[RMDB]
RNA sequence: GGGAACGACUCGAGUAGAGUCGAAAACUGACUCCUGAGCAAAGGACUGAGGUUACUCAGCUUAUUGACAGGCUUGCAAGGGGCAGAGGUGCGGGGAUACCAGGUGGGCCCGUGAAUCCUUUUGUUCGGGUGAACAAAAGUUCGCUUUUGUUCACCCAAAAGAAACAACAACAACAAC
Reactivity to DMS in 0.01 (KOAc 150mM, MgCl2 10mM, bicine 150mM(pH8.5), 24C), signal-to-noise 2, nucleotides 027 to 126: c050u010g000a120c040u010c000c000u000g010a140g000c030a020a060a080g010g020a130c000u010g000a000g000g040u040u120a050c000u000c030a080g000c030u000u010a090u000u000g000a050c080a020g000g000c210u020u000g010c040a110a070g000g000g000g000c050a040g010a110g010g010u040g020c030g000g000g000g000a090u050a100c100c040a150g000g010u030g040g000g000c030c000c030g000u010g010a050a040u040c010c000u000u010u020u050g000u010u000c080
Reactivity to 2A3 in 0.01 (KOAc 150mM, MgCl2 10mM, bicine 150mM(pH8.5), 24C), signal-to-noise 4, nucleotides 027 to 126: c040u040g140a130c040u000c020c000u060g030a100g020c060a030a050a070g040g040a060c000u010g010a010g100g040u220u140a190c010u010c010a020g010c010u060u130a110u120u090g080a080c070a060g030g090c030u050u070g010c020a070a040g030g000g000g000c020a010g000a050g080g010u040g010c030g000g000g000g030a040u060a150c030c000a050g110g090u170g080g060g040c010c000c010g000u010g000a020a040u060c020c010u000u030u050u100g110u040u050c060